[RMDB]
RNA sequence: GGGAACGACUCGAGUAGAGUCGAAAACUGGUAAUGUAGAUCUUGAUGCGUUAGCUAGUGAUAUUUUUGACACUCCUAGCGUACUUCAAGCUACUCUUUCUGAGUUUUCACACUUAGCUACCUUUGCAGACACCACACUUCGGUGUGGUGAAAAGAAACAACAACAACAAC
Reactivity to 2A3 in 0.01 (KOAc 150mM, MgCl2 10mM, bicine 150mM(pH8.5), 24C), signal-to-noise 9, nucleotides 027 to 129: c020u030g010g030u090a090a070u090g000u020a010g010a060u070c000u000u000g000a000u010g000c010g010u010u010a010g010c130u020a010g010u010g060a120u040a220u200u210u100u100u220g080a020c010a000c000u020c000c000u000a000g000c000g010u000a050c030u040u010c010a000a000g000c000u020a010c010u010c050u020u120u020c000u030g080a030g020u020u020u080u080c080a070c010a010c050u070u050a020g030c020u070a080c020c000u060u100u140g050c010a010g040a050
Reactivity to DMS in 0.01 (KOAc 150mM, MgCl2 10mM, bicine 150mM(pH8.5), 24C), signal-to-noise 6, nucleotides 027 to 129: c040u050g000g000u060a100a040u060g010u000a030g000a060u070c000u000u040g000a000u020g000c030g060u000u000a000g040c030u000a000g020u030g050a170u040a100u040u030u020u030u020g040a070c050a060c030u060c300c020u010a000g010c000g000u000a040c140u000u000c020a010a010g030c030u000a000c000u020c150u030u080u010c030u050g030a000g020u000u010u040u070c040a100c060a030c080u000u040a070g030c160u040a020c090c050u060u080u000g000c070a080g020a210